RNA sequence: GGGAACGACUCGAGUAGAGUCGAAAAACGACCACUACGGCUUACGAGCCGUAGUGGUCGACGGUAUCUGGAUAAAACCGGGCCAUUGGCCAAACCCAGCCCAUCAACUGCAGCACCUGUCCCGCAAGUGAGGAACCUUGCUUCGGCAAGGUUCCAAGAUAGUGUAUGACUUCGGUCAUACACUAUCAAAAGAAACAACAACAACAAC
Reactivity to 2A3 in 0.01 (KOAc 150mM, MgCl2 10mM, bicine 150mM(pH8.5), 24C), signal-to-noise 1, nucleotides 027 to 156: a000c000g000a000c010c000a000c010u000a000c010g020g080c020u120u050a040c300g070a070g000c000c010g090u000a000g000u000g000g000u010c000g000a000c000g040g000u010a010u040c000u060g040g000a120u070a120a070a010a080c030c010g000g000g050c000c000a250u110u260g030g000c010c000a100a000a000c010c020c000a000g000c020c030c000a030u060c020a030a130c030u110g030c050a000g000c000a000c050c040u090g020u070c010c000c020g060c070a110a080g150u120g140a080g010g000a000a000c000c000u000u020g010c000u050u010c130g070g000c010a000a010g030g000u000u000c000c000a000a000

Chemical mapping of a 207-nucleotide RNA with 2A3. Reactivities are given for positions 27 through 156. Source: RMDB library M2RFPK, as collected in RNAgym. For 2A3 the reverse transcriptase was SuperScript II with manganese. Values are in units of 0.01, from 0 to 300, in steps of 10.